[RMDB]
RNA sequence: GGGAACGACUCGAGUAGAGUCGAAAAAACAGGUCUAUUCAAGGUAAGCUCGGUUACUUAUAGUACGAGACUGAUCAUCGCUGAUGAUGACUUAGGAUGAAGUCUAUCGUUGGACUGUCAACAAAGGUUACGCCCGCUAAGUCUGAGCAUGCCGAUAUGUGUUGUAAACGUUCGCGUUUACAACACAAAAAGAAACAACAACAACAAC
Reactivity to 2A3 in 0.01 (KOAc 150mM, MgCl2 10mM, bicine 150mM(pH8.5), 24C), signal-to-noise 3, nucleotides 027 to 156: a010a000c130a100g030g060u030c030u100a120u140u160c130a100a010g020g020u070a150a080g010c010u010c000g070g010u160u070a030c000u090u070a040u030a180g040u040a030c030g010a030g080a100c000u000g120a090u010c010a010u030c030g070c250u150g060a090u040g020a050u050g050a090c020u030u050a010g090g100a090u090g010a010a000g010u000c010u090a140u110c070g020u040u060g040g030a070c050u070g050u120c010a020a040c050a090a170a010g050g020u030u040a040c050g060c030c010c010g000c020u020a040a000g000u020c020u030g000a010g000c010a040u090g010c000c030g050a050u080a050
Reactivity to DMS in 0.01 (KOAc 150mM, MgCl2 10mM, bicine 150mM(pH8.5), 24C), signal-to-noise 2, nucleotides 027 to 156: a040a040c050a100g020g000u000c040u010a100u000u000c050a070a140g030g040u000a040a080g020c000u020c010g010g020u000u010a060c030u000u000a070u010a060g020u010a030c070g030a150g010a070c030u000g020a060u000c050a080u010c000g060c110u010g000a090u010g030a030u000g010a030c030u000u000a140g030g000a180u010g010a090a100g010u000c010u000a060u010c160g020u000u000g010g020a080c070u000g000u000c030a020a090c040a070a050a120g000g010u000u000a090c070g000c030c000c020g030c060u010a060a110g000u000c030u010g020a080g000c000a110u000g040c030c020g000a110u000a130